Structure probing data (DMS and 2A3) for a 207-nucleotide construct.
RNA sequence: GGGAACGACUCGAGUAGAGUCGAAAAGAUAGCAUCCAGAAGCAUUAAUAAUCCAGAUGUUUACAACUUCAUAAAAAUUGCCAAGUACGCAUGGAUACAAUAGUCAUUUUCACCAGGUGAAAAAUGACCAGAUGGUAGCACUUCAAUUCUCUGGUGAUACGUACUGCUAUUUCGAUAGCAGUACGUAAAAAGAAACAACAACAACAAC
Reactivity to DMS in 0.01 (KOAc 150mM, MgCl2 10mM, bicine 150mM(pH8.5), 24C), signal-to-noise 3, nucleotides 027 to 156: g000a130u010a060g020c030a300u000c020c020a070g000a090a150g020c050a110u000u000a060a110u000a090a140u010c010c020a040g010a080u000g030u000u000u000a140c030a080a090c040u010u000c050a110u000a030a050a060a050a080u010u010g010c050c060a030a070g000u010a050c070g010c050a080u010g020g000a130u010a040c030a040a120u000a020g010u020c000a040u000u000u000u000c010a030c000c120a100g060g030u010g010a020a020a040a010a020u000g000a030c000c030a060g010a080u000g010g010u000a070g010c050a040c030u010u000c040a030a130u000u000c050u000c000u000g010g030u010g000a100
Reactivity to 2A3 in 0.01 (KOAc 150mM, MgCl2 10mM, bicine 150mM(pH8.5), 24C), signal-to-noise 4, nucleotides 027 to 156: g080a020u100a030g010c020a020u050c020c030a040g040a130a010g010c030a010u100u110a150a090u160a110a040u070c030c030a040g020a120u040g030u030u120u110a050c030a090a040c040u110u140c070a060u160a120a100a040a080a140u100u030g050c020c030a100a070g060u050a030c060g010c030a030u040g030g030a040u030a120c040a020a070u010a060g040u020c010a040u020u020u020u000c020a020c040c110a040g000g190u060g060a030a010a000a010a030u030g010a030c000c020a030g020a140u080g010g030u030a010g020c020a020c060u080u050c050a080a150u090u000c040u000c000u040g000g000u010g000a020
Overview
For DMS, 4,634 sequencing reads were counted. High 2A3 reactivity points to a flexible backbone, as in loops and unpaired stretches. 2A3 adducts were read by reverse transcription with SuperScript II with manganese. The RNA was probed in 150 mM KOAc, 10 mM MgCl2 and 150 mM bicine (pH 8.5) at 24 C.